[RMDB]
RNA sequence: GGGAACGACUCGAGUAGAGUCGAAAAGAUCGUACACGAGUUCGUGUGUACGAGUUCUCGUGAGAGUUCUCGUUCUCGUACACGAACACUCGUUCGUUCGAACGAUCGAACGAGAUCUCUCUCACGAUCGAGAGUACUCGUACGAACGAGAACUCACCUCAGAGACAUGAUUCGUCAUGUCUCUGAGAAAAGAAACAACAACAACAAC
Reactivity to 2A3 in 0.01 (KOAc 150mM, MgCl2 10mM, bicine 150mM(pH8.5), 24C), signal-to-noise 8, nucleotides 027 to 156: g060a030u050c010g010u050a010c020a000c050g050a060g110u150u120c080g020u090g000u020g000u080a000c000g000a010g000u010u010c010u010c020g020u120g060a140g000a000g020u010u000c000u000c000g010u040u010c080u030c100g000u010a030c060a010c070g030a080a000c050a030c080u040c040g020u020u000c010g000u020u020c070g060a160a100c190g000a020u050c050g000a010a000c000g010a010g010a040u010c020u000c000u000c000u000c040a070c080g120a150u210c090g010a010g000a000g040u060a070c060u060c120g000u010a020c040g010a050a010c010g000a010g010a020a020c010u000c010a020c010
Reactivity to DMS in 0.01 (KOAc 150mM, MgCl2 10mM, bicine 150mM(pH8.5), 24C), signal-to-noise 2, nucleotides 027 to 156: g020a080u000c020g040u000a020c040a060c000g000a160g020u010u000c090g040u000g040u000g020u000a020c000g040a000g010u010u000c010u000c020g040u000g000a150g000a080g020u000u000c020u020c000g010u000u000c000u000c050g020u010a090c040a130c040g000a050a010c040a300c050u000c020g000u000u000c010g030u000u000c020g010a160a100c170g010a040u000c020g010a030a030c010g010a030g000a040u000c090u020c010u000c030u000c010a080c080g000a140u010c190g000a080g020a070g010u000a070c090u000c050g010u000a080c050g030a030a050c030g000a020g000a060a060c010u020c010a100c130